[RMDB]
Chemical mapping of a 177-nucleotide RNA with 2A3 and DMS. Values cover nucleotides 27 to 126. For DMS the reverse transcriptase was MarathonRT. It was measured as part of the RMDB libraries RFM100 and RFMREP.

RNA sequence: GGGAACGACUCGAGUAGAGUCGAAAACGACCGUGGCCUUCUAGGCCUGGCCGCCAUACGCCCGCCCGCCAACCGCUUCCAACCAACCCAGCAAGCACAACCUCUUUGGGCGUUCCAACGCGGCGCCUUAAUAGCAGGCUUUCGAGCCUGCUAUUAAAAAAGAAACAACAACAACAAC
Reactivity to 2A3 in 0.01 (KOAc 150mM, MgCl2 10mM, bicine 150mM(pH8.5), 24C), signal-to-noise 4, nucleotides 027 to 126: c050g020a020c000c020g180u080g010g000c000c010u170u140c120u300a080g020g000c000c000u000g010g000c010c000g030c010c010a070u050a120c040g030c000c000c000g010c010c000c000g000c000c000a050a040c010c020g030c000u060u020c010c010a050a070c000c010a020a060c000c000c010a010g060c030a010a060g050c050a040c030a110a130c010c030u070c010u060u130u050g040g000g010c020g020u100u120c040c040a110a040c060g020c070g060g000c010g000c000c000
Reactivity to DMS in 0.01 (KOAc 150mM, MgCl2 10mM, bicine 150mM(pH8.5), 24C), signal-to-noise 3, nucleotides 027 to 126: c080g020a050c020c020g000u010g000g020c010c000u030u020c170u070a080g000g000c010c000u000g010g030c050c020g020c030c050a060u010a160c140g010c010c020c020g010c030c010c060g060c020c030a090a070c050c030g000c040u000u030c020c040a070a080c060c040a040a110c030c030c000a080g000c040a070a100g000c060a070c110a080a090c060c040u020c060u000u010u010g000g010g000c010g010u010u010c040c070a070a130c200g050c060g000g000c010g000c010c010